[RMDB]
RNA sequence: GGGAACGACUCGAGUAGAGUCGAAAAGAGGAAAGAAGGACUCGGACGCGAACCCGUGAGUGGAACCUUGGUCUUUUAUUGGGGGGUACACUCGAGGAGUGGAAGGCGGGGAGGCGGGGUUCCCGGGAAAGGCGACUGUUCGCAGUCGCCAAAAGAAACAACAACAACAAC
Reactivity to DMS in 0.01 (KOAc 150mM, MgCl2 10mM, bicine 150mM(pH8.5), 24C), signal-to-noise 1, nucleotides 027 to 129: g030a130g050g020a080a020a070g030a080a010g030g000a000c090u000c140g070g010a110c000g020c000g010a070a050c070c010c030g200u020g010a070g070u050g030g000a050a060c000c000u000u050g000g050u010c070u100u010u060u030a130u040u100g000g000g000g000g000g000u110a080c120a040c070u030c050g000a110g010g040a060g040u020g000g070a190a030g020g020c020g000g000g000g000a150g060g000c150g020g040g010g070u030u000c040c000c060g010g040g020a030a100a080
Reactivity to 2A3 in 0.01 (KOAc 150mM, MgCl2 10mM, bicine 150mM(pH8.5), 24C), signal-to-noise 3, nucleotides 027 to 129: g070a030g000g000a010a000a020g050a000a010g020g010a000c000u010c050g030g010a010c000g030c060g020a030a060c030c000c080g030u050g030a050g010u110g010g020a020a020c000c040u010u070g050g030u110c040u030u210u120u170a210u090u090g050g000g010g000g000g000u040a010c030a000c010u010c000g070a090g020g000a000g000u110g040g020a090a040g060g050c000g030g000g000g010a050g030g080c100g000g000g000g000u000u140c030c000c000g010g030g030a060a070a010
This 170-nucleotide RNA was probed chemically with DMS and 2A3. The RNA was probed in 150 mM KOAc, 10 mM MgCl2 and 150 mM bicine (pH 8.5) at 24 C. The data come from the RNA Mapping Database (RMDB), library 15KLIB.